RNA sequence: GGGAACGACUCGAGUAGAGUCGAAAACCGUAGGGCAGUAUCAACGUGUAUUUCACGAUGUGCUAGCAUCCGAUUCAGACAAUAUAUUCGAAAGAGUAUAUUGUCUGAAUCGGACUAGCUACCCUCGUGUAAACCGCUGAACCACUGCCCUAAACGGCACAUUAAACUGGUUCGCCAGUUUAAUGUGAAAAGAAACAACAACAACAAC
Reactivity to DMS in 0.01 (KOAc 150mM, MgCl2 10mM, bicine 150mM(pH8.5), 24C), signal-to-noise 1, nucleotides 027 to 156: c020c020g020u000a030g000g000g000c020a040g000u000a190u000c010a020a020c020g020u000g030u000a120u010u010u020c000a010c020g030a030u000g010u000g010c010u000a030g060c010a280u000c000c010g000a020u010u000c000a010g010a030c000a030a030u000a010u000a000u000u000c000g000a190a160a300g030a040g030u000a000u000a000u000u000g000u010c000u000g000a010a000u000c010g000g000a020c030u000a070g010c010u000a010c050c010c060u000c000g090u000g010u000a010a110a050c000c010g010c000u000g020a050a070c050c170a040c010u000g000c000c000c000u000a000a010a040c030g000g010
Reactivity to 2A3 in 0.01 (KOAc 150mM, MgCl2 10mM, bicine 150mM(pH8.5), 24C), signal-to-noise 6, nucleotides 027 to 156: c000c000g010u030a030g000g000g000c000a000g000u020a010u050c010a010a020c020g090u120g020u200a300u100u050u030c000a000c000g010a020u030g100u140g030c030u000a000g010c020a100u000c000c000g000a000u000u010c000a000g000a000c000a000a000u000a000u000a000u010u010c010g050a140a060a040g000a050g010u000a010u000a000u000u000g000u000c000u000g000a000a000u000c000g000g000a000c000u010a010g000c000u040a040c040c010c000u010c010g000u000g020u040a020a020a000c000c000g000c010u000g000a010a020c150c010a010c070u000g000c010c000c000u010a010a020a000c000g040g000

Background: Chemical mapping of a 207-nucleotide RNA with DMS and 2A3. The data come from the RNA Mapping Database (RMDB), library RNAMAK. The reactions ran in a buffer of 150 mM KOAc, 10 mM MgCl2 and 150 mM bicine (pH 8.5), at 24 C.